[RMDB]
RNA sequence: GGGAACGACUCGAGUAGAGUCGAAAAAGAAAGGUGAAUUAGAAAAGUGGCAGAUAGAAACUGUGUAGUGUUUUUAUUUAUGCUCUCUAUUCUUCAGCACAGUGCACUUUCCAUUUUAGCUAGUCAGGUAUGCAUACCCUUUCGAGGGUAUGCAUACAAAAGAAACAACAACAACAAC
Reactivity to DMS in 0.01 (KOAc 150mM, MgCl2 10mM, bicine 150mM(pH8.5), 24C), signal-to-noise 2, nucleotides 027 to 126: a090g030a050a110a050g000g020u000g000a020a020u020u000a010g010a060a020a170a040g010u000g010g040c090a020g000a020u000a030g000a050a000a010c000u010g040u040g000u010a100g000u000g020u010u020u000u000u020a020u010u020u010a090u020g010c020u000c080u030c030u000a050u010u010c000u000u020c050a160g040c040a010c060a090g000u010g010c100a090c010u000u000u000c000c070a050u010u000u010u020a050g000c010u020a060g010u040c140a050g010
Reactivity to 2A3 in 0.01 (KOAc 150mM, MgCl2 10mM, bicine 150mM(pH8.5), 24C), signal-to-noise 3, nucleotides 027 to 126: a000g140a030a010a000g090g020u110g030a070a040u120u100a070g050a030a150a000a020g080u060g000g000c010a000g000a050u030a030g020a040a070a000c010u030g040u130g080u290a070g100u080g020u110u010u010u060u020a100u000u100u010a120u050g000c040u040c000u010c000u060a100u090u000c010u100u070c020a030g040c000a020c010a060g030u040g040c060a030c050u000u090u010c030c050a080u000u020u050u140a040g010c060u010a010g110u070c000a010g000
Structure probing data (DMS and 2A3) for a 177-nucleotide construct. Reactivities are rounded to 0.1 and cut off at 0 and 3. The 2A3 profile rests on 2,017 reads. The DMS profile rests on 2,960 reads. Conditions: 150 mM KOAc, 10 mM MgCl2 and 150 mM bicine (pH 8.5), 24 C.